The data come from the RNA Mapping Database (RMDB), library OK3TST. The record gives the reactivity of an RNA of 207 nucleotides to 2A3.

RNA sequence: GGGAACGACUCGAGUAGAGUCGAAAACUUGCCUCGGCCUCCUGAAGUGCUGGGAUUACAGCUGUACAUUUCUUUAGGAUUGCAGUUGCUGCACUGUGUCAGGGUGAUCUGUUGGCCUGCGAUCCCCACCAUUAACUGCCUUUACUGUCAGGUACUAACCGGCUAUUUAUUUCGAUAAAUAGCCGGUAAAAGAAACAACAACAACAAC
Reactivity to 2A3 in 0.01 (KOAc 150mM, MgCl2 10mM, bicine 150mM(pH8.5), 24C), signal-to-noise 1, nucleotides 027 to 156: c000u010u060g010c000c000u020c010g020g000c030c020u070c000c000u000g010a050a000g010u030g030c010u060g000g050g050a040u080u210a010c010a000g000c000u030g030u010a020c010a180u080u100u080c070u130u210u100a080g020g050a040u010u040g000c000a000g000u050u040g040c050u080g000c010a000c000u060g060u060g080u190c040a000g030g000g000u080g000a110u070c000u070g010u080u030g080g010c010c000u040g000c040g080a040u030c020c030c050c000a040c000c000a020u080u180a040a140c060u060g000c020c000u060u130u160a140c070u040g050u090c030a000g050g030u180a030c240u300a010
For 2A3 the reverse transcriptase was SuperScript II with manganese.
The reactions ran in a buffer of 150 mM KOAc, 10 mM MgCl2 and 150 mM bicine (pH 8.5), at 24 C.
Reactivities are given for positions 27 through 156.